[RMDB]
Structure probing data (DMS and 2A3) for a 177-nucleotide construct. Reactivities are given for positions 27 through 126. For 2A3, 2,703 sequencing reads were counted. The data come from the RNA Mapping Database (RMDB), library RFMREP. 2A3 adducts were read by reverse transcription with SuperScript II with manganese. The RNA was probed in 150 mM KOAc, 10 mM MgCl2 and 150 mM bicine (pH 8.5) at 24 C.

RNA sequence: GGGAACGACUCGAGUAGAGUCGAAAAGUGAAAGUUUAAGGUAGCUCAGUCGACAAUAGAGUAAACUUAACCACCGAGAGUAAAAGAGAUCUUACUCAAGGAUGCAGAAGGUAAUCUCACUUUUGACCGCUACUCUUAAGUUCGCUUAAGAGUAGCGAAAAGAAACAACAACAACAAC
Reactivity to DMS in 0.01 (KOAc 150mM, MgCl2 10mM, bicine 150mM(pH8.5), 24C), signal-to-noise 2, nucleotides 027 to 126: g000u000g000a060a140a120g030u000u000u000a020a040g000g040u000a300g030c040u010c000a130g010u000c100g000a070c190a180a050u010a070g010a020g000u010a010a070a290c000u000u000a010a040c100c020a040c000c020g000a300g000a010g010u000a020a020a030a120g000a170g000a100u000c070u020u000a020c020u000c000a020a300g030g000a060u000g020c170a100g000a110a050g000g000u010a070a070u000c040u000c010a060c010u000u000u000u000g010a150c070
Reactivity to 2A3 in 0.01 (KOAc 150mM, MgCl2 10mM, bicine 150mM(pH8.5), 24C), signal-to-noise 3, nucleotides 027 to 126: g010u020g010a000a000a100g030u080u030u070a010a000g000g000u020a010g030c010u000c030a060g170u150c080g120a110c090a100a110u120a150g010a000g010u040a150a100a010c010u020u000a000a020c000c010a020c020c010g020a020g000a000g020u010a010a040a000a020g150a030g000a020u010c010u010u000a000c010u010c000a000a020g020g000a050u090g030c030a030g000a250a020g040g040u110a090a150u040c000u010c020a000c000u020u010u010u080g070a040c010